Chemical mapping of a 207-nucleotide RNA with DMS and 2A3. In probing experiments dimethyl sulfate is read out at A N1 and C N3, which are open when not base-paired. High 2A3 reactivity points to a flexible backbone, as in loops and unpaired stretches. Conditions: 150 mM KOAc, 10 mM MgCl2 and 150 mM bicine (pH 8.5), 24 C. Values cover nucleotides 27 to 156.
RNA sequence: GGGAACGACUCGAGUAGAGUCGAAAACUGCAGGUCAACGGUACUUCUUCAGAUCAGCUAUUGCAGAAGAGAGGUGAUCCAAGCGCUCUGGGCCAGUGCGACUGUAUAUAGGAGCUUAUCAUUUUAACCAGAAGCUAACUCUCUCCGAAACAAUGAGACUAAUAGUAGGUUUCGACCUACUAUUAGUAAAAGAAACAACAACAACAAC
Reactivity to DMS in 0.01 (KOAc 150mM, MgCl2 10mM, bicine 150mM(pH8.5), 24C), signal-to-noise 4, nucleotides 027 to 156: c030u000g040c050a070g020g020u010c020a080a110c060g010g030u000a050c030u000u000c010u010u000c040a150g010a100u000c040a110g020c030u000a080u000u010g000c040a140g000a090a060g000a060g010a070g010g010u010g010a090u010c110c050a040a090g000c050g010c080u000c030u010g030g010g000c020c080a080g010u000g010c030g010a100c030u000g020u000a140u000a190u010a140g030g010a110g010c050u000u020a070u020c040a090u000u000u000u000a080a020c050c010a070g010a040a090g020c030u000a050a100c040u000c010u000c010u000c010c020g000a240a120a060c050a050a060u000g010a190g000
Reactivity to 2A3 in 0.01 (KOAc 150mM, MgCl2 10mM, bicine 150mM(pH8.5), 24C), signal-to-noise 8, nucleotides 027 to 156: c020u040g000c020a020g020g030u050c020a050a020c090g040g000u030a050c040u030u070c000u050u060c040a020g000a130u020c010a010g060c030u090a060u140u120g020c030a020g010a170a000g020a020g000a010g010g070u070g030a040u030c080c050a070a010g030c010g010c060u000c010u010g030g030g000c060c040a070g050u050g060c010g030a060c030u020g060u120a070u020a020u100a210g030g020a020g000c010u070u150a080u170c060a140u070u170u100u110a050a030c010c000a020g020a080a000g030c000u020a040a050c000u010c000u000c000u000c050c020g070a050a030a010c040a030a080u130g020a040g040